[RMDB]
RNA sequence: GGGAACGACUCGAGUAGAGUCGAAAAGAUAUGGAGUCACCCAGCUUUUGACGCGAGUGUCGGAAACGACCUCGCGAUAAGCUGGUGACUCCUAAGUCAAAGCCAGGUUGCUUCGGCAACCUGGCAACUUCAAAGAUCGGUUCGCCGAUCUUUGAAGAAAAGAAACAACAACAACAAC
Reactivity to DMS in 0.01 (KOAc 150mM, MgCl2 10mM, bicine 150mM(pH8.5), 24C), signal-to-noise 1, nucleotides 027 to 126: g000a060u000a190u000g010g020a050g020u000c000a000c250c160c160a030g010c010u000u000u010u000g050a210c030g020c000g010a010g000u000g030u000c000g000g000a010a050a110c000g040a020c000c000u000c010g000c000g010a000u000a000a050g000c000u000g000g010u000g010a020c010u000c000c010u000a010a080g010u000c050a100a140a160g000c000c000a010g000g000u000u000g000c000u000u030c230g000g000c030a010a010c000c000u020g000g030c000a000a000
Reactivity to 2A3 in 0.01 (KOAc 150mM, MgCl2 10mM, bicine 150mM(pH8.5), 24C), signal-to-noise 1, nucleotides 027 to 126: g000a010u030a020u080g000g020a010g010u000c000a030c070c300c090a110g010c020u210u300u220u300g190a070c020g000c000g010a000g030u300g010u050c010g010g020a050a010a000c000g000a000c000c000u030c000g000c020g000a010u010a010a060g000c000u000g000g010u010g000a000c000u040c010c000u000a000a000g000u000c020a080a020a050g060c020c000a020g000g020u000u000g000c040u060u170c260g120g000c000a000a010c010c000u000g010g020c000a020a000